RNA sequence: GGGAACGACUCGAGUAGAGUCGAAAAACAGCCAUGGUGCUUUGGACAGGGCUGGGAUUGUUCAUACACGUUUUGCUCUUUGUCACAUUCAUGCUCUGUCACCUGGGCCUGGUCAGGCACAGACUGGUGUGGUAAUAUUCUUCGGAAUAUUACCACAAAAAGAAACAACAACAACAAC
Reactivity to 2A3 in 0.01 (KOAc 150mM, MgCl2 10mM, bicine 150mM(pH8.5), 24C), signal-to-noise 8, nucleotides 027 to 126: a010c040a010g010c030c010a120u220g060g000u150g060c040u150u120u130g020g000a000c010a020g000g010g040c010u060g030g000g050a070u060u120g030u090u080c040a030u080a080c070a040c140g060u050u090u120u250g060c040u060c000u110u110u140g060u090c030a040c010a060u030u040c000a010u080g010c010u010c020u030g010u020c000a080c010c010u020g000g030g020c000c000u040g020g030u050c060a040g040g000c040a030c020a060g110a080c060u080g010g090
Reactivity to DMS in 0.01 (KOAc 150mM, MgCl2 10mM, bicine 150mM(pH8.5), 24C), signal-to-noise 6, nucleotides 027 to 126: a080c090a080g010c030c030a090u030g010g020u010g000c050u000u010u020g010g000a020c010a020g020g010g010c010u000g000g000g010a080u030u000g010u000u020c060a080u020a090c170a060c160g000u020u020u030u010g000c070u010c100u020u010u010g000u020c080a050c110a060u010u000c020a110u010g000c040u000c020u010g000u000c020a070c050c020u000g000g000g000c010c000u000g000g000u020c050a040g010g000c090a040c050a040g010a300c060u010g000g010
Structure probing data (2A3 and DMS) for a 177-nucleotide construct.
The RNA was probed in 150 mM KOAc, 10 mM MgCl2 and 150 mM bicine (pH 8.5) at 24 C.
It was measured as part of the RMDB library OK1LIB.